[RMDB]
RNA sequence: GGGAACGACUCGAGUAGAGUCGAAAAGAUAUGGAUCAAUUGGAGACCCACUUCUACCCACCCUAUACGAUAUCGGAAACGAUAUCGUAUAGGAGGAAGGAGGUCUAUGAAGAUUGAUCCUAAGUCACAGAAAUUAAAACUUCGGUUUUAAUUUCUGAAAAGAAACAACAACAACAAC
Reactivity to DMS in 0.01 (KOAc 150mM, MgCl2 10mM, bicine 150mM(pH8.5), 24C), signal-to-noise 1, nucleotides 027 to 126: g020a120u000a300u010g000g000a010u000c010a030a000u000u010g010g000a030g020a020c010c000c190a260c020u000u000c000u000a110c000c000c020a300c150c000c000u000a000u010a000c010g000a010u000a010u000c010g000g000a240a130a140c020g010a020u010a000u000c010g000u020a000u000a000g000g020a030g010g000a000a010g030g000a300g000g000u000c000u000a290u040g000a280a170g000a010u000u000g000a020u000c000c000u000a030a090g000u000c100a120

Source: RMDB library TTRINS, as collected in RNAgym. Structure probing data (DMS) for a 177-nucleotide construct. For DMS the reverse transcriptase was MarathonRT. Conditions: 150 mM KOAc, 10 mM MgCl2 and 150 mM bicine (pH 8.5), 24 C. For DMS, 736 sequencing reads were counted.